[RMDB]
RNA sequence: GGGAACGACUCGAGUAGAGUCGAAAAACCUUUGUGGGAUGUGCCAUCGAUCUGUACCAGUAAGACUACGUCCCAUUGGGACGUACGAAUGACCGUACAGGGAGGGCAUCCCACUCUGGUAAAUCCUGUUUGGGGUGUUCGCACCCCAAACAGGAAAGAGUGGACGUAGUUUCGACUACGUCCACUCAAAAGAAACAACAACAACAAC
Reactivity to 2A3 in 0.01 (KOAc 150mM, MgCl2 10mM, bicine 150mM(pH8.5), 24C), signal-to-noise 1, nucleotides 027 to 156: a000c010c000u020u010u040g000u000g000g020g000a020u010g100u110g300c060c000a300u300c010g030a030u040c000u000g000u000a000c000c000a000g010u020a020a000g030a080c010u000a000c010g020u000c050c000c030a290u160u170g000g000g000a000c000g030u020a030c100g010a200a080u000g010a010c010c000g000u000a000c000a000g000g000g010a080g000g000g040c000a000u000c030c010c000a000c000u000c000u000g000g030u060a090a070a080u020c020c000u000g000u000u000u000g020g030g020g000u000g100u040u250c220g090c110a020c040c000c000c000a010a000a000c010a000g000g000a000a000a000

Structure probing data (2A3) for a 207-nucleotide construct. Conditions: 150 mM KOAc, 10 mM MgCl2 and 150 mM bicine (pH 8.5), 24 C. 2A3 adducts were read by reverse transcription with SuperScript II with manganese. For 2A3, 675 sequencing reads were counted.